Conditions: 150 mM KOAc, 10 mM MgCl2 and 150 mM bicine (pH 8.5), 24 C. This 177-nucleotide RNA was probed chemically with 2A3.

RNA sequence: GGGAACGACUCGAGUAGAGUCGAAAACCCACGACUUUCGAGUCGUGGGAAAUUUAAUCAGCGGUAAAUAAUUAGCUCCGCUUACCGCUGAAGCGGAGCAUACACGUCUAGGAUUCGUCCUAGACAACGUUGGUUGAAAGUUCGCUUUCAACCAACGAAAAGAAACAACAACAACAAC
Reactivity to 2A3 in 0.01 (KOAc 150mM, MgCl2 10mM, bicine 150mM(pH8.5), 24C), signal-to-noise 1, nucleotides 027 to 126: c010c000c000a030c000g000a000c000u160u120u150c170g080a010g050u000c010g000u000g010g000g010a040a000a040u150u130u060a050a090u010c000a000g000c000g220g210u230a030a100a060u060a000a260u120u170a030g010c020u010c010c000g010c000u000u010a140c010c000g020c000u000g000a000a000g030c030g000g000a040g010c010a010u060a000c110a010c010g010u000c000u000a010g000g000a010u040u120c130g000u070c010c000u000a000g000a000c000a000a000